[RMDB]
RNA sequence: GGGAACGACUCGAGUAGAGUCGAAAACAGCAUCUCUCCGCUGGUCGAUGGCCUGGUCGAUGAAUUGAUCGUGCUGGACUCCGGUUCCACCGACGACACCGAGAUCCGGGCCAUCGCCUCCGGCGCCACGCUUGUGUAAAUUCGUUUACACAAGCGUAAAAGAAACAACAACAACAAC
Reactivity to DMS in 0.01 (KOAc 150mM, MgCl2 10mM, bicine 150mM(pH8.5), 24C), signal-to-noise 4, nucleotides 027 to 126: c130a110g010c130a100u010c080u000c060u000c050c040g030c030u000g000g010u010c010g010a020u000g000g010c030c010u000g010g020u000c000g010a050u010g010a160a230u000u000g010a130u000c000g010u010g000c140u000g020g000a020c030u010c230c160g010g000u000u000c010c010a030c030c030g000a020c000g000a070c040a010c050c010g000a120g010a100u010c010c010g010g000g000c010c000a000u000c010g000c050c070u000c050c000g020g000c210g000c160c140
Reactivity to 2A3 in 0.01 (KOAc 150mM, MgCl2 10mM, bicine 150mM(pH8.5), 24C), signal-to-noise 5, nucleotides 027 to 126: c040a020g090c070a170u050c030u010c010u050c130c010g010c010u010g000g010u030c010g000a000u000g010g000c000c000u000g010g000u020c010g020a090u050g060a100a280u130u090g160a300u130c020g050u130g080c150u010g030g000a010c030u100c120c220g100g020u170u010c010c000a010c010c000g050a020c020g000a010c000a010c040c010g030a050g000a130u060c010c020g000g000g000c000c000a000u000c000g000c000c000u010c000c000g010g000c020g030c040c030
The record gives the reactivity of an RNA of 177 nucleotides to DMS and 2A3. For 2A3 the reverse transcriptase was SuperScript II with manganese.